[RMDB]
RNA sequence: GGGAACGACUCGAGUAGAGUCGAAAAGAUAUGGAGACGAUGAAAGCGCCAUAAAGUAUUCUUAGUAUGGUCGGAAACGACCAUACUAAGAAGAAAUAUGGAACUACGCUAACCGUCUCCUAAGUCACGUAUGUAUCAAGUUCGCUUGAUACAUACGAAAAGAAACAACAACAACAAC
Reactivity to DMS in 0.01 (KOAc 150mM, MgCl2 10mM, bicine 150mM(pH8.5), 24C), signal-to-noise 4, nucleotides 027 to 126: g010a040u000a300u000g010g000a030g000a020c000g010a060u010g020a140a240a080g010c000g030c000c010a000u000a000a010a050g010u000a110u000u000c000u000u000a000g010u010a010u000g000g010u000c000g000g010a130a100a300c010g000a020c000c000a000u000a000c000u000a000a000g020a000a000g000a080a210a210u000a010u010g000g010a090a060c170u010a300c020g000c000u000a140a150c110c000g020u000c000u010c000c000u000a010a080g010u000c060a270
Reactivity to 2A3 in 0.01 (KOAc 150mM, MgCl2 10mM, bicine 150mM(pH8.5), 24C), signal-to-noise 3, nucleotides 027 to 126: g040a020u090a030u180g000g010a000g010a010c060g030a060u140g230a300a290a060g010c020g010c020c000a000u010a020a000a020g010u000a010u000u010c000u000u000a000g000u000a010u000g010g010u010c020g000g040a090a100a060c010g000a000c010c010a000u000a000c010u000a000a000g000a000a000g000a000a000a000u000a010u010g000g030a000a020c030u130a010c030g000c010u020a040a070c020c000g000u000c000u040c000c000u000a050a020g030u020c020a010
Source information
Source: RMDB library TTRINS, as collected in RNAgym. An RNA of 177 nucleotides, treated with DMS and 2A3 and read out base by base. The RNA was probed in 150 mM KOAc, 10 mM MgCl2 and 150 mM bicine (pH 8.5) at 24 C. For 2A3, 10,038 sequencing reads were counted.